[RMDB]
Source: RMDB library OK1LIB, as collected in RNAgym.
This 177-nucleotide RNA was probed chemically with 2A3 and DMS.
The RNA was probed in 150 mM KOAc, 10 mM MgCl2 and 150 mM bicine (pH 8.5) at 24 C.

RNA sequence: GGGAACGACUCGAGUAGAGUCGAAAAUAUACAGUAAAAUGUAUCAUGGGUUCGAAUCCCAUUCUCUCCGAUUCCUAGGACCCGUACUAUCAAGUAUUGCUGAAUCCCGUCAGGACUGGAAGGUAGCCGACGAUGGUACUUUCGAGUACCAUCGUCGAAAAGAAACAACAACAACAAC
Reactivity to 2A3 in 0.01 (KOAc 150mM, MgCl2 10mM, bicine 150mM(pH8.5), 24C), signal-to-noise 3, nucleotides 027 to 126: u150a000u030a010c010a000g010u010a030a100a060a010u070g010u010a020u070c070a070u150g000g000g000u000u030c030g010a060a080u040c000c040c010a030u140u020c080u010c000u000c040c030g070a110u020u050c030c040u050a020g070g000a030c000c000c000g010u010a040c050u060a060u200c030a140a000g060u050a100u140u070g030c020u050g020a040a040u010c020c010c000g000u030c030a020g000g120a050c030u030g000g070a040a010g040g000u080a020g040c010
Reactivity to DMS in 0.01 (KOAc 150mM, MgCl2 10mM, bicine 150mM(pH8.5), 24C), signal-to-noise 2, nucleotides 027 to 126: u030a090u000a000c020a000g000u050a030a150a240a110u000g010u030a000u010c300a070u030g030g000g030u000u000c050g000a300a140u020c000c000c040a100u000u000c030u000c000u000c000c040g000a080u010u000c000c000u000a070g000g000a050c030c040c020g000u040a140c110u000a080u000c110a010a030g000u000a060u000u000g010c050u000g000a190a100u010c000c030c060g030u030c100a080g020g000a100c070u060g010g000a060a020g000g000u020a030g000c190